[RMDB]
Structure probing data (DMS and 2A3) for a 177-nucleotide construct. Reactivities are given for positions 27 through 126. 2A3 adducts were read by reverse transcription with SuperScript II with manganese. For 2A3, 4,104 sequencing reads were counted. The DMS profile rests on 2,148 reads. High 2A3 reactivity points to a flexible backbone, as in loops and unpaired stretches. Source: RMDB library TTRDES, as collected in RNAgym.
RNA sequence: GGGAACGACUCGAGUAGAGUCGAAAAAAAAAGAUAUGGAAUGAUGUCACAGUGAUGACCAUACGUAACAUCAUCUCGGAAACGAGAUGUGGUAUGCAAGCUGAAGUCAUCAUUCCUAAGUCAAAAAGGAUAAAUUGAAGUUCGCUUCAAUUUAUCCAAAAGAAACAACAACAACAAC
Reactivity to DMS in 0.01 (KOAc 150mM, MgCl2 10mM, bicine 150mM(pH8.5), 24C), signal-to-noise 3, nucleotides 027 to 126: a010a070a050a040a080g000a020u020a300u000g010g010a030a000u000g000a010u000g000u000c030a280c050a020g030u000g020a090u010g020a200c300c010a000u000a000c010g000u000a040a050c160a070u000c000a000u000c000u010c000g010g010a130a040a120c020g000a020g000a010u000g020u000g000g000u000a000u000g000c030a040a130g020c020u010g000a100a160g000u000c010a000u000c000a010u000u000c000c010u000a020a140g010u020c040a020a070a090a100a060
Reactivity to 2A3 in 0.01 (KOAc 150mM, MgCl2 10mM, bicine 150mM(pH8.5), 24C), signal-to-noise 3, nucleotides 027 to 126: a000a000a000a000a000g110a040u130a050u100g000g010a000a010u010g020a010u000g010u010c010a010c000a140g020u060g140a300u130g010a060c050c010a000u040a030c030g140u160a070a120c030a250u300c000a010u000c020u010c010g030g010a070a120a060c010g000a000g010a020u010g000u000g000g000u020a020u030g030c020a010a150g000c010u040g080a180a040g030u040c000a010u010c000a010u010u020c000c000u000a060a000g030u030c030a000a020a010a100a210